[RMDB]
The record gives the reactivity of an RNA of 177 nucleotides to 2A3 and DMS.
The 2A3 profile rests on 2,794 reads.
The reactions ran in a buffer of 150 mM KOAc, 10 mM MgCl2 and 150 mM bicine (pH 8.5), at 24 C.
DMS (dimethyl sulfate) methylates the pairing face of unpaired adenines and cytosines.
DMS adducts were read by reverse transcription with MarathonRT.
As a SHAPE reagent, 2A3 marks flexible, mostly unpaired nucleotides at the ribose 2'-OH.
The DMS profile rests on 1,892 reads.

RNA sequence: GGGAACGACUCGAGUAGAGUCGAAAACGGUCGAAAUUCGUUUCGACCGAAUAUGCUAGCUGAGCACAGGUGCAAUGCUAAGCUGAAAGCCAGCUGCAAGCGCGAGUUCGGCGUUCGCGCCGAACAAUCUGACAUCAUCUUUCGAGAUGAUGUCAGAAAAAGAAACAACAACAACAAC
Reactivity to 2A3 in 0.01 (KOAc 150mM, MgCl2 10mM, bicine 150mM(pH8.5), 24C), signal-to-noise 2, nucleotides 027 to 126: c010g000g000u000c010g020a010a010a030u120u080c190g030u050u000u000c010g000a000c000c010g000a000a000u090a030u030g010c060u070a030g000c000u000g040a010g070c000a040c050a130g000g200u130g030c070a090a130u150g050c040u080a070a060g030c000u000g030a100a020a010g020c000c000a010g010c030u040g010c070a060a000g070c080g000c010g120a120g040u020u000c010g010g000c010g030u020u050c190g010c010g000c010c000g000a000a000c000a020a080
Reactivity to DMS in 0.01 (KOAc 150mM, MgCl2 10mM, bicine 150mM(pH8.5), 24C), signal-to-noise 2, nucleotides 027 to 126: c020g020g010u010c000g000a010a000a030u000u010c190g040u000u000u000c000g000a000c000c000g000a070a000u000a060u010g000c000u010a020g000c000u010g000a260g000c000a060c080a140g000g000u000g020c040a090a180u010g020c060u000a020a110g010c010u000g010a090a130a130g000c060c020a030g000c020u000g000c080a050a070g010c080g000c140g000a220g000u010u000c000g000g010c000g010u010u000c210g020c010g020c010c040g000a000a000c030a060a060